[RMDB]
RNA sequence: GGGAACGACUCGAGUAGAGUCGAAAAAUGUUCCCCAGCCAGGGAUUUUCAUCCUCGAGUCUCUUGAUGGUUCUCCUGGUCUUCCGGAGCCUUCUUUCGAGAUCUUCCGCGUCUUUUCUUGCUUGGACCCAUUUCUCGAGGAUUUCCUCUCUUCCUCACCUGUACUAACCUUCGGGUUAGUACAGGUAAAAGAAACAACAACAACAAC
Reactivity to 2A3 in 0.01 (KOAc 150mM, MgCl2 10mM, bicine 150mM(pH8.5), 24C), signal-to-noise 2, nucleotides 027 to 156: a010u090g010u020u010c000c010c000c010a030g070c060c030a010g090g040g010a020u120u200u160u290c070a040u060c010c030u010c000g020a070g120u020c050u000c050u170u140g020a050u040g020g050u080u070c030u010c010c030u080g150g000u130c070u250u080c050c060g020g000a000g020c010c020u060u020c000u050u170u120c050g020a020g010a070u010c040u110u020c040c030g040c050g060u040c080u010u130u090u030c060u060u140g050c020u030u020g030g020a040c020c030c040a100u120u140u060c000u010c010g000a010g030g000a000u000u060u030c020c000u070c010u020c010u120u080c010c010u010c020